Description:
Structure probing data (DMS) for a 177-nucleotide construct. Reactivities are given for positions 27 through 126. The reactions ran in a buffer of 150 mM KOAc, 10 mM MgCl2 and 150 mM bicine (pH 8.5), at 24 C.
[RMDB]
RNA sequence: GGGAACGACUCGAGUAGAGUCGAAAAUUUGCCCUUUUAACUUUGGGGGUUACUUCUGACCAUAGUCCAACUGCUCAGAAGGGCUUUUUCACAAAUUGUUUACCGUGGCAGUUGCUACCCUAUUGGGCGUUCCAGUCAUUUUCGAAUGACUGGAACGAAAAGAAACAACAACAACAAC
Reactivity to DMS in 0.01 (KOAc 150mM, MgCl2 10mM, bicine 150mM(pH8.5), 24C), signal-to-noise 1, nucleotides 027 to 126: u000u010u020g010c000c010c000u090u000u020u000a080a120c040u010u010u000g030g000g010g010g010u000u000a040c100u000u000c040u040g000a090c050c070a060u020a110g000u010c210c040a030a100c090u000g010c130u000c070a070g020a070a070g000g010g010c020u020u000u030u010u010c110a140c180a050a080a110u020u000g000u000u000u000a070c110c030g000u000g000g020c030a020g010u000u000g030c220u000a080c030c010c020u000a170u000u000g000g000g010